Annotation:
An RNA of 207 nucleotides, treated with 2A3 and read out base by base. The RNA was probed in 150 mM KOAc, 10 mM MgCl2 and 150 mM bicine (pH 8.5) at 24 C. 2A3 adducts were read by reverse transcription with SuperScript II with manganese.
RNA sequence: GGGAACGACUCGAGUAGAGUCGAAAAGAGACGCUCCUCACUUCCUAGAUGGGAUGGCGGCCGGGAAGAGGCGCUCCUCACUUCUCAGAGUGGGCAGCCAGGCAGAGGGGCUCCUCACAUCCCAGAUGAUGGGCGGCCAGGCAGAGACGCUCCUCACACGAGGCAAUAAGUUCGCUUAUUGCCUCGUAAAAGAAACAACAACAACAAC
Reactivity to 2A3 in 0.01 (KOAc 150mM, MgCl2 10mM, bicine 150mM(pH8.5), 24C), signal-to-noise 1, nucleotides 027 to 156: g160a000g000a020c060g010c000u000c000c010u020c030a080c040u040u010c010c030u110a120g060a250u220g030g000g000a040u050g100g130c140g120g060c060c070g100g000g000a060a060g040a070g070g010c050g000c010u020c010c010u050c010a050c030u070u090c020u050c130a060g040a020g090u230g010g010g000c040a010g000c020c040a060g050g090c080a000g010a000g020g000g000g000c000u030c000c000u010c000a010c020a030u060c000c000c000a000g030a090u230g020a050u040g000g010g000c040g050g010c060c060a090g020g060c000a010g040a010g000a100c040g050c010u050c000c000u030c000a020c000